[RMDB]
RNA sequence: GGGAACGACUCGAGUAGAGUCGAAAACCUGCACUCAGUAAGUCUUAUGACGUAGGCCAGCUGGUCAAAGGAUCACAGUCAUUCCUGGGAGAAGUGUUACAACAGCAGUAAGAGCUGAGUGCCGGAGAGGCAAGUGGGAGUGCUACUUACUCCACCAGAUCAUGACUGAGUUCGCUCAGUCAUGAUCAAAAGAAACAACAACAACAAC
Reactivity to 2A3 in 0.01 (KOAc 150mM, MgCl2 10mM, bicine 150mM(pH8.5), 24C), signal-to-noise 2, nucleotides 027 to 156: c010c000u010g020c040a020c000u000c040a000g010u100a180a010g110u060c040u000u110a050u130g010a060c080g100u070a050g060g040c040c000a190g000c140u180g080g000u080c100a180a050a060g050g000a010u070c060a060c040a130g050u010c000a080u150u140c040c090u090g000g090g010a060g020a080a200g030u050g040u110u060a090c060a270a010c050a100g000c000a010g020u050a070a000g030a000g020c020u000g000a000g000u000g000c000c020g010g000a080g030a010g010g080c020a020a120g070u080g060g010g030a040g000u020g080c010u020a080c040u030u060a040c010u050c050c000a060c030c050a000